[RMDB]
RNA sequence: GGGAACGACUCGAGUAGAGUCGAAAAACACCUUCUCCGGUGCGGUUUCCGUCUCCUGUAAAAAGAAAGAAACCAGCUGUGAGACUAUCAGCGCCGUUCUUCAGGCCAUUUCCCUCCUAGGGAAACCGUCACUUAGAUCAUUCGUGAUCUAAGUGACAAAAGAAACAACAACAACAAC
Reactivity to DMS in 0.01 (KOAc 150mM, MgCl2 10mM, bicine 150mM(pH8.5), 24C), signal-to-noise 3, nucleotides 027 to 126: a050c190a120c030c050u010u010c010u000c000c010g000g020u000g030c100g000g010u000u000u000c010c260g000u010c110u010c040c040u010g040u040a040a100a080a110a050g000a070a150a040g000a020a020a060c040c000a300g010c000u020g000u030g020a050g050a090c270u040a080u050c130a040g040c120g000c050c010g060u000u040c060u000u000c040a130g000g000c050c010a130u010u010u000c010c020c020u060c140c160u000a070g000g000g000a020a030a040c300c100
Reactivity to 2A3 in 0.01 (KOAc 150mM, MgCl2 10mM, bicine 150mM(pH8.5), 24C), signal-to-noise 9, nucleotides 027 to 126: a000c070a100c010c000u050u020c010u010c010c010g000g020u050g040c210g010g010u010u010u000c020c020g060u020c050u060c050c010u110g080u200a080a090a030a030a010g080a020a060a000g020a010a030a010c010c010a000g000c000u020g110u170g090a020g020a030c050u140a150u220c060a060g040c020g010c110c000g060u110u070c040u090u100c060a050g000g020c000c020a060u010u020u020c000c000c010u060c070c140u180a110g000g000g000a010a010a020c040c060